Structure probing data (2A3) for a 207-nucleotide construct. 2A3 adducts were read by reverse transcription with SuperScript II with manganese. The 2A3 profile rests on 683 reads.

[RMDB]
RNA sequence: GGGAACGACUCGAGUAGAGUCGAAAAGCAAUAAAAGCGAUCGACGAGGUUCUCGUCGCCAACGGCCUUCAGCCUUUCAUGAUCACCAAACACGAAUUCAGGGAGGUGCGCCCAUGACCGCCACCGUUGACGCCGCGCGCCGCAUUCAGCGGCAGGCGGCCCAAUUCUCCUUCGGGAGAAUUGGGCCAAAAGAAACAACAACAACAAC
Reactivity to 2A3 in 0.01 (KOAc 150mM, MgCl2 10mM, bicine 150mM(pH8.5), 24C), signal-to-noise 2, nucleotides 027 to 156: g000c040a070a110u230a200a140a070a010g100c050g030a060u010c020g010a000c030g000a060g000g160u300u230c040u000c050g000u000c010g010c040c000a080a030c040g020g060c030c030u080u110c050a030g020c000c020u060u020u060c090a130u070g040a050u040c000a010c180c000a040a170a070c060a020c110g130a140a110u190u200c040a030g000g010g000a010g030g000u060g000c030g040c000c090c010a050u120g030a030c010c050g030c040c030a060c000c010g000u020u030g010a050c010g010c040c020g060c010g040c100g020c030c000g050c050a060u200u200c090a070g000c060g000g000c020a010g000g070c040